Record summary:
Chemical mapping of a 177-nucleotide RNA with 2A3 and DMS.
[RMDB]
RNA sequence: GGGAACGACUCGAGUAGAGUCGAAAAGAGCUGUUAAAUCAGCAAGCGGCCAGACAACCGUCGGGAUAGAUCCACAGGUGAAGCGGAUUGAUUCCUCUGCUUUCAGCUACUAAAUCUAUCCUACAUAUACAUCAUCUUGUUUCGACAAGAUGAUGUAAAAAGAAACAACAACAACAAC
Reactivity to 2A3 in 0.01 (KOAc 150mM, MgCl2 10mM, bicine 150mM(pH8.5), 24C), signal-to-noise 9, nucleotides 027 to 126: g060a020g000c010u010g020u060u120a080a110a270u180c010a010g000c000a010a010g030c010g030g000c040c050a070g040a130c030a060a060c030c020g060u080c100g010g000g000a000u000a000g000a010u010c040c020a040c060a080g090g240u010g010a010a000g000c010g000g010a010u040u110g070a080u230u090c030c010u020c020u010g000c000u060u190u110c020a050g060c010u040a050c030u060a080a060a040u000c000u000a000u000c000c000u010a020c020a010u210a000
Reactivity to DMS in 0.01 (KOAc 150mM, MgCl2 10mM, bicine 150mM(pH8.5), 24C), signal-to-noise 6, nucleotides 027 to 126: g010a140g020c010u000g010u010u010a070a120a090u000c000a000g000c010a160a120g000c040g000g010c020c030a100g000a110c160a090a170c050c060g000u020c100g000g000g000a010u000a010g000a010u000c060c150a230c220a040g000g000u010g010a020a010g000c020g010g010a020u010u010g000a160u020u020c150c210u000c010u000g000c000u010u020u010c010a020g000c020u010a070c140u000a060a200a010u000c000u000a010u000c000c000u000a040c140a070u010a150
Reactivities are rounded to 0.1 and cut off at 0 and 3.
Conditions: 150 mM KOAc, 10 mM MgCl2 and 150 mM bicine (pH 8.5), 24 C.
Reactivities are given for positions 27 through 126.